Chemical mapping of a 177-nucleotide RNA with 2A3 and DMS. DMS adducts were read by reverse transcription with MarathonRT. Conditions: 150 mM KOAc, 10 mM MgCl2 and 150 mM bicine (pH 8.5), 24 C. For 2A3, 10,050 sequencing reads were counted. 2A3 adducts were read by reverse transcription with SuperScript II with manganese. The DMS profile rests on 10,597 reads. The data come from the RNA Mapping Database (RMDB), library OK2TRN.
RNA sequence: GGGAACGACUCGAGUAGAGUCGAAAAGGCGCAGAGCAAGGACCUGCAGAACUUCCUGGAGGCGAGCGAGGAGGACUUUGCAAUUGAGGUGGCGCGCGCCAACCACGAGAGCGCCGGCGGAGCCAACGAUAUUGAAGAGGUUCGCCUCUUCAAUAUCAAAAGAAACAACAACAACAAC
Reactivity to 2A3 in 0.01 (KOAc 150mM, MgCl2 10mM, bicine 150mM(pH8.5), 24C), signal-to-noise 5, nucleotides 027 to 126: g020g010c020g000c030a010g030a030g110c020a040a040g050g010a070c010c020u030g040c060a030g030a150a070c020u060u020c020c030u100g080g060a060g020g050c050g030a030g030c020g020a030g030g030a020g020g000a060c020u050u050u050g010c040a070a180u090u170g040a060g040g020u050g030g000c030g000c020g010c010g000c060c000a030a060c010c010a040c040g080a100g020a020g040c020g000c020c020g000g010c020g020g030a030g050c010c010a030a020c070
Reactivity to DMS in 0.01 (KOAc 150mM, MgCl2 10mM, bicine 150mM(pH8.5), 24C), signal-to-noise 7, nucleotides 027 to 126: g010g010c030g010c020a110g000a190g000c040a080a060g000g010a090c060c020u000g000c040a060g010a120a090c070u000u000c040c020u010g010g010a120g010g010c130g010a050g010c050g010a210g000g000a060g000g000a090c040u010u000u000g010c030a100a140u000u010g000a060g020g020u000g000g010c020g010c160g010c080g020c010c020a070a120c030c020a080c060g010a080g000a140g000c040g010c020c030g000g010c040g000g000a090g000c030c050a090a110c170